[RMDB]
RNA sequence: GGGAACGACUCGAGUAGAGUCGAAAACAAAACAACAAACAAAAACAAAACAAAACGAUCCAAAGAGAACCAGAGAAAGGAUCUCAGUGAUCGCAGAGCUGAGAUUAAAACAAACAAACAAAACAAACAUGUACGGGCAGUUCGCUGCCCGUACAUGAAAAGAAACAACAACAACAAC
Reactivity to 2A3 in 0.01 (KOAc 150mM, MgCl2 10mM, bicine 150mM(pH8.5), 24C), signal-to-noise 1, nucleotides 027 to 126: c050a000a060a020a020c030a030a010c090a010a080a050c060a010a290a000a010a000c010a000a130a000a110c150a070a140a000a000c070g090a110u030c000c080a110a180a000g010a000g000a070a010c030c030a000g010a000g020a290a080a000g020g000a070u000c000u000c000a000g000u000g090a030u010c000g100c090a000g010a010g050c000u000g050a050g000a200u100u030a010a030a000a000c100a110a000a000c000a000a050a100c000a020a300a080a000c010a120a090a020